[RMDB]
RNA sequence: GGGAACGACUCGAGUAGAGUCGAAAAUACUGGGGAGGCUACAAGUGUUAGAGUUUGUGUCUGAAGGGCCUUAUGCACAAUAGGAAUGAUAUCCUUUUGUCUGGGGGAAAGACUUGUCAUUCAAAAUAAAGGAGUUCUAUAUCUGUACAGAUAGUAAACCGAUAAUGGAUUUCGAUCCAUUAUCGGUAAAAGAAACAACAACAACAAC
Reactivity to 2A3 in 0.01 (KOAc 150mM, MgCl2 10mM, bicine 150mM(pH8.5), 24C), signal-to-noise 1, nucleotides 027 to 156: u080a020c060u020g000g010g000g000a010g020g000c030u070a060c000a090a150g060u040g040u110u080a070g020a030g080u020u120u020g060u040g030u030c040u060g020a040a010g020g000g000c020c000u090u170a060u050g020c040a020c010a030a040u010a060g050g020a050a020u030g040a020u060a080u160c000c000u030u030u030u120g090u000c050u010g100g000g000g000g010a070a000a010g060a010c000u060u020g030u020c000a020u070u040c010a030a000a130a060u130a020a080a010g060g000a030g000u010u000c010u010a070u000a020u050c020u000g020u060a050c080a050g050a010u060a040g060u090a120a200
Reactivity to DMS in 0.01 (KOAc 150mM, MgCl2 10mM, bicine 150mM(pH8.5), 24C), signal-to-noise 1, nucleotides 027 to 156: u000a100c070u000g020g000g070g000a080g010g000c080u040a100c100a070a120g030u010g000u000u010a120g020a140g000u000u000u010g040u040g020u000c030u010g030a060a070g030g010g070c020c030u000u000a090u000g020c030a080c040a070a070u010a040g030g020a070a100u010g010a130u000a110u000c010c030u000u000u010u010g010u000c060u000g020g000g030g010g010a110a060a130g000a130c050u000u000g010u010c000a160u010u010c090a140a100a120a100u000a030a050a070g000g010a150g020u000u000c030u000a060u000a010u000c010u010g010u000a130c070a120g000a080u010a070g000u010a050a130